[RMDB]
RNA sequence: GGGAACGACUCGAGUAGAGUCGAAAAGCUGCAGCGUACUCUUCACCUCUGCAAUCUUAUGCCUGCUGGACUCAUUCCUGCGGUUAUGAUUAUGUCUACAACCCUUUCUUUGUCGAUGUUCAACAGUGUAGUAGAAGGAGUUCGCUCCUUCUACUACAAAAGAAACAACAACAACAAC
Reactivity to DMS in 0.01 (KOAc 150mM, MgCl2 10mM, bicine 150mM(pH8.5), 24C), signal-to-noise 2, nucleotides 027 to 126: g040c140u010g020c050a050g010c140g000u010a060c050u000c030u020u000c070a100c090c020u010c060u000g030c100a060a050u000c030u000u000a060u010g010c040c010u000g050c030u000g000g010a050c120u010c100a140u010u000c030c010u020g030c040g000g000u000u010a040u010g000a050u020u000a110u000g020u010c030u000a070c110a040a110c040c000c050u000u010u010c030u000u000u000g010u000c060g020a110u000g010u000u000c070a080a090c060a080g020u000
Reactivity to 2A3 in 0.01 (KOAc 150mM, MgCl2 10mM, bicine 150mM(pH8.5), 24C), signal-to-noise 1, nucleotides 027 to 126: g040c040u080g030c030a010g020c010g030u070a050c060u070c000u000u050c000a020c020c010u020c030u030g020c030a010a040u000c000u060u120a080u160g030c000c000u030g000c030u000g000g000a010c020u010c130a040u120u070c030c000u020g010c010g000g040u060u070a020u080g040a040u020u070a040u180g040u000c010u010a050c020a050a030c010c000c030u000u130u020c070u080u120u020g070u040c070g060a050u060g000u150u130c030a040a050c000a140g030u000

Structure probing data (DMS and 2A3) for a 177-nucleotide construct. For DMS the reverse transcriptase was MarathonRT. The RNA was probed in 150 mM KOAc, 10 mM MgCl2 and 150 mM bicine (pH 8.5) at 24 C. The 2A3 profile rests on 1,264 reads.